RNA sequence: GGGAACGACUCGAGUAGAGUCGAAAACACUCUCUAAGAUAAGGUCAGCUAAUUAAGCUUUCGGGCCCAUACCCCGAACAUGACGGUUAAAAUCCCUCCCUUGUCAAUGAACCCCUACGUACUCAUAAUCCUUAUCUCAAGCCUAGGAUUAGGCACCUCGAUUAUAGCAUUUCGAUGCUAUAAUCGAAAAAGAAACAACAACAACAAC
Reactivity to DMS in 0.01 (KOAc 150mM, MgCl2 10mM, bicine 150mM(pH8.5), 24C), signal-to-noise 2, nucleotides 027 to 156: c080a140c050u000c020u000c050u000a060a170g010a040u010a030a040g000g050u010c030a090g010c020u010a070a050u010u010a050a110g040c020u010u010u000c060g000g000g040c020c000c260a160u020a190c300c020c010c000g020a030a040c080a080u000g010a020c070g000g020u020u000a050a070a270a100u000c000c030c050u000c010c020c000u000u000g030u000c020a130a050u010g020a120a150c000c020c010c020u010a070c050g000u000a030c040u000c030a130u000a000a040u000c000c000u000u000a010u000c050u000c040a070a110g020c100c040u000a040g010g010a070u010u000a050g020g020c010a050c080c040
Reactivity to 2A3 in 0.01 (KOAc 150mM, MgCl2 10mM, bicine 150mM(pH8.5), 24C), signal-to-noise 2, nucleotides 027 to 156: c030a030c020u100c000u010c040u050a140a050g000a040u030a030a000g010g000u010c020a000g000c030u030a070a100u300u020a300a020g000c000u020u010u000c000g000g010g000c030c070c040a060u150a100c000c020c000c000g010a020a010c020a020u060g030a010c060g010g000u000u000a070a090a030a090u000c000c000c000u020c000c000c000u010u010g000u010c000a020a060u060g020a040a090c000c000c020c000u030a060c050g130u050a040c060u040c130a060u060a070a030u050c010c000u130u150a090u140c120u040c120a090a020g010c010c010u020a050g060g010a090u110u010a020g010g000c010a030c020c020
The record gives the reactivity of an RNA of 207 nucleotides to DMS and 2A3. Conditions: 150 mM KOAc, 10 mM MgCl2 and 150 mM bicine (pH 8.5), 24 C. For 2A3, 3,646 sequencing reads were counted. It was measured as part of the RMDB library OK3TST.